RNA sequence: GGGAACGACUCGAGUAGAGUCGAAAAGAUAUGGAACAGUGACAUGAUGGAGUUCGGAAACGAACUCUCAUCAACAGCACUUUCCUAAGUCAAAAGGCGUGAUUAAGGUUCGCCUUAAUCACGCCAACACGAGAAGCAACUUCGGUUGCUUCUCGUGAAAAGAAACAACAACAACAAC
Reactivity to DMS in 0.01 (KOAc 150mM, MgCl2 10mM, bicine 150mM(pH8.5), 24C), signal-to-noise 1, nucleotides 027 to 126: g010a020u000a300u010g000g010a000a010c210a010g000u000g000a120c060a150u010g010a020u000g000g000a030g000u000u000c000g000g010a080a060a170c010g000a030a000c000u000c000u000c000a000u000c000a030a080c190a230g010c010a020c000u000u000u000c000c000u010a020a190g000u030c030a090a030a100a030g000g030c000g070u000g000a000u000u010a010a000g000g010u000u030c300g010c000c000u060u010a000a000u000c010a030c000g000c000c000a010a010
An RNA of 177 nucleotides, treated with DMS and read out base by base. It was measured as part of the RMDB library TTRDEL. For DMS the reverse transcriptase was MarathonRT.